Conditions: 150 mM KOAc, 10 mM MgCl2 and 150 mM bicine (pH 8.5), 24 C. The record gives the reactivity of an RNA of 177 nucleotides to 2A3 and DMS.
[RMDB]
RNA sequence: GGGAACGACUCGAGUAGAGUCGAAAAGCGUAUAUUCACGCGCCAUGACGGCAUCAAAGGCAAGCCGACCCAUGCCUGGCCAACUGAAGACCGUUUCGAUGACGAUGGCGCCGCCAAGAAUGCCGGCGGUCGCACUCGCAUUCGUGCGAGUGCGACCAAAAGAAACAACAACAACAAC
Reactivity to 2A3 in 0.01 (KOAc 150mM, MgCl2 10mM, bicine 150mM(pH8.5), 24C), signal-to-noise 2, nucleotides 027 to 126: g000c000g050u090a070u030a090u220u240c110a000c010g000c000g040c010c000a050u110g030a020c020g060g000c000a020u050c060a060a110a030g020g000c060a080a050g000c020c000g030a010c030c000c000a010u060g070c000c020u030g020g030c050c000a070a060c060u080g130a030a070g060a060c020c130g000u080u030u010c140g020a020u120g060a070c050g050a050u020g010g010c040g020c020c000g020c030c010a100a000g050a100a000u040g050c000c000g000g040c020
Reactivity to DMS in 0.01 (KOAc 150mM, MgCl2 10mM, bicine 150mM(pH8.5), 24C), signal-to-noise 2, nucleotides 027 to 126: g020c020g000u000a100u010a020u010u040c170a050c090g000c000g010c060c050a020u020g070a180c030g000g000c000a090u000c110a020a140a040g050g050c010a010a100g010c080c030g010a150c020c060c100a050u020g040c030c030u020g000g010c010c050a050a090c140u000g000a160a040g000a110c070c140g000u010u030u010c110g000a030u040g010a160c040g010a000u000g000g000c000g000c010c000g000c010c040a080a080g010a140a060u000g000c060c000g020g020c160
DMS adducts were read by reverse transcription with MarathonRT. Source: RMDB library OK1LIB, as collected in RNAgym. For 2A3, 988 sequencing reads were counted. For DMS, 1,688 sequencing reads were counted.